[RMDB]
This 177-nucleotide RNA was probed chemically with DMS and 2A3. The data come from the RNA Mapping Database (RMDB), library TTRDEL. For 2A3, 5,194 sequencing reads were counted. Conditions: 150 mM KOAc, 10 mM MgCl2 and 150 mM bicine (pH 8.5), 24 C. For DMS the reverse transcriptase was MarathonRT.
RNA sequence: GGGAACGACUCGAGUAGAGUCGAAAAGAUAUGGACCACCGCCCUAUUGGGAGCUGUGUCGGAAACGACCAGCGAAGAACAAUAGUAACAAGUGGUCCUAAGUCAAAGAGGGACUUCGGUCCCUCAAGAUUUCCGUAAUGUUCGCAUUACGGAAAUCAAAAGAAACAACAACAACAAC
Reactivity to DMS in 0.01 (KOAc 150mM, MgCl2 10mM, bicine 150mM(pH8.5), 24C), signal-to-noise 3, nucleotides 027 to 126: g000a070u020a300u010g010g000a010c000c000a010c010c050g020c300c170c000u000a040u000u000g010g010g000a110g030c000u000g000u020g030u000c000g000g010a090a090a120c020g000a010c000c000a000g010c000g000a050a090g020a110a080c020a010a010u000a020g030u010a070a120c200a200a070g000u000g000g010u000c000c000u010a020a080g000u010c030a050a090a150g010a030g000g000g020a010c000u000u010c240g010g010u000c000c000c000u000c000a000a040
Reactivity to 2A3 in 0.01 (KOAc 150mM, MgCl2 10mM, bicine 150mM(pH8.5), 24C), signal-to-noise 3, nucleotides 027 to 126: g000a010u060a040u120g000g000a000c010c000a010c000c020g020c000c020c030u060a130u050u160g040g000g000a010g000c000u080g040u110g000u300c000g010g020a060a050a040c010g010a000c000c000a010g020c010g030a100a030g020a020a010c040a040a030u070a040g140u210a110a100c080a220a030g000u010g020g000u000c000c000u000a030a020g000u020c040a030a100a110g000a000g010g000g010a010c020u090u070c300g110g020u000c010c000c010u020c000a000a000